[RMDB]
Structure probing data (2A3 and DMS) for a 207-nucleotide construct. For 2A3 the reverse transcriptase was SuperScript II with manganese. The RNA was probed in 150 mM KOAc, 10 mM MgCl2 and 150 mM bicine (pH 8.5) at 24 C. For DMS the reverse transcriptase was MarathonRT.
RNA sequence: GGGAACGACUCGAGUAGAGUCGAAAAUUAGACUUCGGUCUAAGGGUAGGAUAUGGACAUGAAAGCUCGACGAUCUCUCGUAACAUCAGGUCGGAAACGACCUGUGGAGAGGGAGAGCUAUAAGUGUCCUAAGUCAAGCAAGCCCAUUCGUGGGCAAGUGAAAUAUCAAGUUCGCUUGAUAUUUCACAAAAGAAACAACAACAACAAC
Reactivity to 2A3 in 0.01 (KOAc 150mM, MgCl2 10mM, bicine 150mM(pH8.5), 24C), signal-to-noise 2, nucleotides 027 to 156: u010u000a010g000a010c010u030u030c300g090g000u010c000u010a020a030g110g040g080u140a090g180g000a000u010a000u040g000g000a000c000a010u060g050a200a210a030g000c000u060c030g280a300c000g000a120u010c000u000c000u000c000g010u010a010a010c010a150u190c000a030g010g000u000c000g010g000a010a000a010c000g000a000c000c010u000g000u000g010g010a000g010a000g000g000g000a010g000a000g000c000u020a010u020a040a020g010u000g000u000c000c000u000a010a000g010u010c020a020a070g060c040a120a050g000c000c010c010a030u060u130c260g090u060g000g000g000c010a030a050
Reactivity to DMS in 0.01 (KOAc 150mM, MgCl2 10mM, bicine 150mM(pH8.5), 24C), signal-to-noise 3, nucleotides 027 to 156: u000u000a000g000a020c010u000u000c250g050g040u010c010u000a010a030g010g020g020u000a100g020g020a080u000a120u010g000g030a020c000a040u000g020a180a230a060g000c010u010c010g010a130c160g010a050u010c000u010c000u000c010g010u010a050a050c230a050u000c010a010g010g010u000c010g010g020a060a050a080c010g000a010c000c000u000g030u020g010g020a050g000a060g000g010g020a030g000a010g040c010u000a030u010a020a300g010u000g000u000c000c010u000a000a060g010u000c010a090a210g000c070a080a200g010c010c000c000a060u000u010c200g010u000g010g020g050c000a050a050